Overview: Chemical mapping of a 177-nucleotide RNA with DMS and 2A3. For DMS the reverse transcriptase was MarathonRT. It was measured as part of the RMDB library OK1LIB. The DMS profile rests on 21,628 reads.
RNA sequence: GGGAACGACUCGAGUAGAGUCGAAAAGGUGGCUCCAACUGUGCUCAGUUGUCAGCAGACAUGGAGUCACCGAUUUAGCAUGUUCGUCCUACGCAGAGCCGUCUGACGGUGUAGGACGUUCAUGCGAGGGAUCCUUUACCUUCGGGUAGAGGAUCCCAAAAGAAACAACAACAACAAC
Reactivity to DMS in 0.01 (KOAc 150mM, MgCl2 10mM, bicine 150mM(pH8.5), 24C), signal-to-noise 7, nucleotides 027 to 126: g010g020u000g000g000c000u000c000c000a060a150c190u020g010u010g010c040u010c070a210g020u020u010g000u020c260a130g020c010a040g000a100c210a190u010g000g000a000g000u000c000a000c010c000g000a020u020u020u020a130g010c000a000u000g000u000u000c020g010u000c000c000u000a000c000g030c200a110g020a160g020c000c020g000u020c120u020g020a050c010g010g000u010g010u000a000g000g000a000c010g000u000u000c000a000u000g000c010g010a090
Reactivity to 2A3 in 0.01 (KOAc 150mM, MgCl2 10mM, bicine 150mM(pH8.5), 24C), signal-to-noise 9, nucleotides 027 to 126: g000g000u000g000g000c000u000c000c010a100a140c060u050g020u060g060c030u050c160a260g070u220u130g160u270c060a030g010c000a010g050a090c050a100u060g000g000a000g000u000c000a000c000c000g000a000u000u010u050a010g000c000a000u000g000u000u000c000g000u000c000c000u010a010c010g020c100a070g040a050g220c030c020g070u120c260u270g100a100c010g010g030u150g000u020a000g000g000a000c000g000u000u000c000a000u000g000c000g000a080